The data come from the RNA Mapping Database (RMDB), library RFM100. This 177-nucleotide RNA was probed chemically with 2A3. For 2A3 the reverse transcriptase was SuperScript II with manganese. The 2A3 profile rests on 550 reads.
RNA sequence: GGGAACGACUCGAGUAGAGUCGAAAAGAAAGAACGGCGUGUCUUUGGCAAGUAGAAUAGCAGGCUUAUCACAUGUUCAAUUCAAUCUGCUGUGAGAUUCUUCUAUUCUACUUUCGACAACACCCAACCAUGCUCGCUGGUUCGCCAGCGAGCAUGGAAAAGAAACAACAACAACAAC
Reactivity to 2A3 in 0.01 (KOAc 150mM, MgCl2 10mM, bicine 150mM(pH8.5), 24C), signal-to-noise 1, nucleotides 027 to 126: g050a000a030a020g030a050a030c080g080g000c140g010u110g080u000c080u190u190u000g060g000c030a010a040g000u000a000g000a000a000u000a000g010c000a000g000g000c030u040u160a100u160c030a010c000a050u170g020u300u110c010a090a070u140u160c030a060a080u130c050u130g010c000u010g000u010g000a000g000a000u020u020c000u000u010c000u000a000u000u000c000u000a020c000u000u030u000c000g000a000c010a030a000c000a010c090c030c000a000a010